[RMDB]
RNA sequence: GGGAACGACUCGAGUAGAGUCGAAAAGAUAUGGAUGUGAACUACCGUUAAGUAUACUACCCACCUCGGAAACGAGAGGUAUAUGUGCGCGGCACAUCCUAAGUCAAAAGAGCGGUUCGCCGCUCAACCUCAUAUCUUAGUUCGCUAAGAUAUGAGGAAAAGAAACAACAACAACAAC
Reactivity to DMS in 0.01 (KOAc 150mM, MgCl2 10mM, bicine 150mM(pH8.5), 24C), signal-to-noise 8, nucleotides 027 to 126: g000a030u000a300u010g000g000a010u000g010u000g010a080a040c050u020a300c020c000g010u000u010a110a240g010u000a020u000a010c030u000a100c090c070c080a300c170c010u000c000g010g000a070a060a110c010g010a010g010a060g010g000u000a000u000a000u000g000u000g030c300g010c010g010g000c000a010c010a010u000c000c000u000a060a080g000u000c040a070a070a130a130g000a000g010c000g010g010u000u000c250g020c010c000g020c000u000c010a040a080
Reactivity to 2A3 in 0.01 (KOAc 150mM, MgCl2 10mM, bicine 150mM(pH8.5), 24C), signal-to-noise 9, nucleotides 027 to 126: g030a020u060a040u130g000g000a010u000g020u020g030a110a100c080u200a070c300c010g010u040u030a150a050g040u030a050u020a100c030u090a100c060c060c070a150c080c000u000c000g020g020a050a040a020c010g010a010g010a050g050g000u010a030u000a000u060g240u060g090c120g000c000g020g000c000a000c010a000u000c000c000u000a040a010g030u010c020a020a050a110a090g010a000g000c010g000g050u100u150c300g050c110c000g000c000u000c000a000a030
Conditions: 150 mM KOAc, 10 mM MgCl2 and 150 mM bicine (pH 8.5), 24 C. The record gives the reactivity of an RNA of 177 nucleotides to DMS and 2A3. For DMS, 11,949 sequencing reads were counted. The 2A3 profile rests on 38,866 reads. DMS adducts were read by reverse transcription with MarathonRT.